[RMDB]
RNA sequence: GGGAACGACUCGAGUAGAGUCGAAAACAAAUGUCCCAUACUCUCGUGUUAUUUCCAGGAUGGGCUUUAAACUCGAUGCAACAGUUCCUGGAUAUCCUAAGCUUUUCAUUACUCGUGAAGAGGCUGUCAACGCGAGGCUUCGGCCUCGCGAAAAGAAACAACAACAACAAC
Reactivity to DMS in 0.01 (KOAc 150mM, MgCl2 10mM, bicine 150mM(pH8.5), 24C), signal-to-noise 2, nucleotides 027 to 129: c260a000a000a000u050g060u030c010c020c000a210u000a130c010u020c040u060c060g030u030g060u070u040a110u070u020u000c000c020a020g020g010a030u090g030g060g000c000u000u000u000a080a030a040c090u000c170g050a090u050g020c030a000a000c050a090g100u000u010c000c000u000g030g000a050u020a020u000c080c070u010a070a000g010c020u010u060u030u000c070a030u060u100a000c070u060c160g000u000g010a070a000g000a080g000g070c010u020g000u070c160a060a070
Reactivity to 2A3 in 0.01 (KOAc 150mM, MgCl2 10mM, bicine 150mM(pH8.5), 24C), signal-to-noise 3, nucleotides 027 to 129: c100a010a110a020u200g100u050c000c000c000a000u090a060c060u090c030u030c000g080u040g000u030u080a240u060u120u000c000c000a000g010g030a020u000g000g030g080c000u040u120u060a130a170a030c090u050c070g060a100u130g050c050a120a090c040a280g100u070u000c020c000u000g000g000a030u000a000u020c010c030u030a030a030g000c010u000u000u060u000c000a030u010u150a140c030u030c070g030u000g020a030a020g010a030g090g040c000u030g080u140c110a070a050
Annotation: Chemical mapping of a 170-nucleotide RNA with DMS and 2A3. Conditions: 150 mM KOAc, 10 mM MgCl2 and 150 mM bicine (pH 8.5), 24 C. Reactivities are given for positions 27 through 129. Source: RMDB library 15KLIB, as collected in RNAgym. For 2A3 the reverse transcriptase was SuperScript II with manganese.